This 177-nucleotide RNA was probed chemically with 2A3 and DMS. It was measured as part of the RMDB library TTRDES. For 2A3, 15,800 sequencing reads were counted. Values are in units of 0.01, from 0 to 300, in steps of 10.
RNA sequence: GGGAACGACUCGAGUAGAGUCGAAAAGAUAUGGAACUACGGGCGAUAAGCCUAUGUCGGAAACGACAUGAGGCUUUUGACGCCUCGUAGUUCCUAAGUCAAAGGCAUAAGGUUCGCCUUAUGCCAACUUAUUAAUCAGCUUCGGCUGAUUAAUAAGAAAAGAAACAACAACAACAAC
Reactivity to 2A3 in 0.01 (KOAc 150mM, MgCl2 10mM, bicine 150mM(pH8.5), 24C), signal-to-noise 5, nucleotides 027 to 126: g010a000u010a020u070g000g010a010a010c000u010a010c030g000g000g030c050g170a240u110a300a010g000c000c000u000a000u000g000u000c010g020g000a050a020a010c010g030a000c030a020u070g240a030g000g030c030u070u060u100u260g300a130c010g000c000c000u010c010g000u000a000g000u000u000c010c000u000a000a000g000u000c010a000a090a100g010g000c000a000u010a020a000g070g010u040u150c300g200c030c000u000u000a000u000g000c000c000a000a000
Reactivity to DMS in 0.01 (KOAc 150mM, MgCl2 10mM, bicine 150mM(pH8.5), 24C), signal-to-noise 5, nucleotides 027 to 126: g000a030u000a120u020g000g000a010a000c000u000a000c010g010g000g010c000g010a140u010a010a030g020c000c000u010a010u000g010u000c010g010g000a050a030a060c000g010a010c000a000u000g020a030g020g010c000u000u000u000u010g010a240c070g010c010c000u000c040g020u000a000g010u000u000c000c000u000a000a050g000u000c020a110a160a180g010g010c000a010u000a010a010g010g010u000u010c300g010c010c000u000u000a000u000g010c000c000a020a040

Conditions: 150 mM KOAc, 10 mM MgCl2 and 150 mM bicine (pH 8.5), 24 C.